This 207-nucleotide RNA was probed chemically with DMS and 2A3.

RNA sequence: GGGAACGACUCGAGUAGAGUCGAAAAGGGAAUGGUGGUUUACCCCGUUAUCAAAUCAUUACCGACCAAUAAUUGGCGAAACUCGUUUCGCGUUGGCUGCCUAAUUCAAGGAAUUAGCGUGCCUUCAAAGACAUCAAGAAGUUCGCUUCUUGAUGAACGGAUACGGAUAGUUCGCUAUCCGUAUCCGAAAAGAAACAACAACAACAAC
Reactivity to DMS in 0.01 (KOAc 150mM, MgCl2 10mM, bicine 150mM(pH8.5), 24C), signal-to-noise 2, nucleotides 027 to 156: g020g030g000a050a070u000g030g020u020g040g010u010u000u010a100c060c010c020c020g040u010u010a130u020c070a070a050a080u000c050a110u000u000a030c020c030g000a070c030c010a060a100u010a070a200u000u000g010g080c000g000a060a080a080c050u000c110g010u010u000u000c020g000c050g010u000u010g010g010c010u000g020c080c000u010a010a020u000u000c020a140a170g020g000a070a020u000u000a040g000c040g000u000g010c020c000u030u010c040a090a110a080g000a160c000a000u010c000a030a030g000a050a040g020u000u010c300g030c000u000u010c000u000u000g000a000u000g020a020a140
Reactivity to 2A3 in 0.01 (KOAc 150mM, MgCl2 10mM, bicine 150mM(pH8.5), 24C), signal-to-noise 4, nucleotides 027 to 156: g010g020g040a060a050u090g010g030u030g000g080u050u100u200a100c040c020c000c000g040u080u030a140u140c090a070a000a040u030c020a030u040u090a110c020c020g080a070c020c090a010a010u240a120a080u110u200g050g000c020g010a040a030a020c110u080c130g060u000u010u010c030g020c000g020u030u040g000g000c010u050g030c030c030u000a000a010u010u010c110a190a090g170g000a050a050u000u000a000g030c050g070u040g020c010c000u000u000c070a110a100a020g060a020c000a000u000c000a000a000g000a000a000g010u040u130c190g040c180u000u000c010u000u000g000a000u000g000a030a010
The data come from the RNA Mapping Database (RMDB), library M2RFPK.
2A3 adducts were read by reverse transcription with SuperScript II with manganese.
Conditions: 150 mM KOAc, 10 mM MgCl2 and 150 mM bicine (pH 8.5), 24 C.